RNA sequence: GGGAACGACUCGAGUAGAGUCGAAAAGGCGCAGCUGAGCUCACAGGGAUGAUGGAUUCAGCUGCCCGACGGGAUUGCAUAUUAGUUGGGUAAACAGUAGAGCUCACGCUACGUGUGUAGUAGAGAACUCCUCCCUAUGAUUCGUCAUAGGGAGGAGAAAAGAAACAACAACAACAAC
Reactivity to 2A3 in 0.01 (KOAc 150mM, MgCl2 10mM, bicine 150mM(pH8.5), 24C), signal-to-noise 2, nucleotides 027 to 126: g040g000c070g010c040a020g000c000u000g010a000g000c020u000c010a050c040a060g170g110g040a090u080g020a060u110g070g000a000u010u000c000a000g000c040u020g000c000c000c010g020a000c020g080g070g020a140u090u150g080c060a040u120a100u240u120a030g060u070u010g020g040g010u090a010a140a040c030a030g120u140a060g050a030g060c020u000c040a020c090g020c020u010a010c010g100u140g060u110g000u080a060g020u000a020g020a010g060a100a050
Reactivity to DMS in 0.01 (KOAc 150mM, MgCl2 10mM, bicine 150mM(pH8.5), 24C), signal-to-noise 4, nucleotides 027 to 126: g020g020c210g020c010a000g000c010u000g010a020g010c010u000c000a040c010a110g010g020g000a140u000g010a110u000g020g020a120u010u000c010a030g010c040u000g000c000c000c010g020a090c100g000g000g000a100u000u010g010c150a110u000a050u000u010a120g010u000u000g000g000g020u010a060a050a070c070a090g010u000a090g010a080g000c030u000c010a040c140g010c010u000a010c060g010u010g000u010g030u000a060g020u010a060g010a110g000a110a170